[RMDB]
An RNA of 207 nucleotides, treated with DMS and 2A3 and read out base by base. High 2A3 reactivity points to a flexible backbone, as in loops and unpaired stretches.
RNA sequence: GGGAACGACUCGAGUAGAGUCGAAAAUGUAUGUUAUAAACUGAUGGCAUAGUGAUAUAGACAUGGUUUUAUAUAAUUGCUUUUAAAUCAGGAGAGGAAAGAAGAAAAUGCUUUUAUAGUGUCUUUCAUAAUUAUAUGAUUACCUUUACUGAUGCUAAGGCACGUAAUUAUUCGUAAUUACGUGCCUAAAAGAAACAACAACAACAAC
Reactivity to DMS in 0.01 (KOAc 150mM, MgCl2 10mM, bicine 150mM(pH8.5), 24C), signal-to-noise 1, nucleotides 027 to 156: u000g010u000a090u020g000u000u020a130u010a050a030a120c020u020g010a090u010g000g000c020a080u000a040g010u010g010a200u000a120u000a140g040a080c050a040u000g030g020u010u030u000u010a050u000a040u010a030a060u010u000g030c000u000u010u000u020a070a170a030u020c050a020g030g010a090g020a030g020g000a060a090a240g020a090a150g010a010a040a060a040u000g020c030u000u000u020u000a160u010a070g050u020g000u000c030u000u010u010c000a170u000a080a180u000u000a180u010a140u020g000a070u000u010a150c030c010u020u000u000a070c020u000g010a070u000g000c100u000a080
Reactivity to 2A3 in 0.01 (KOAc 150mM, MgCl2 10mM, bicine 150mM(pH8.5), 24C), signal-to-noise 1, nucleotides 027 to 156: u140g010u070a080u080g020u050u080a170u120a190a100a030c020u070g090a070u090g060g000c010a020u010a070g040u060g060a040u020a070u070a230g060a070c050a120u070g030g000u010u080u140u000a060u000a000u030a020a080u060u050g020c010u080u150u000u250a060a110a020u050c040a000g000g060a030g000a000g070g060a120a040a000g040a000a040g040a000a110a090a030u090g010c010u110u170u070u120a140u170a110g010u030g020u000c010u020u030u000c000a020u070a130a070u220u080a110u040a010u210g050a010u000u120a060c000c000u000u080u050a040c010u010g000a030u000g010c020u090a070
The RNA was probed in 150 mM KOAc, 10 mM MgCl2 and 150 mM bicine (pH 8.5) at 24 C. Source: RMDB library OK3TST, as collected in RNAgym. Values are in units of 0.01, from 0 to 300, in steps of 10.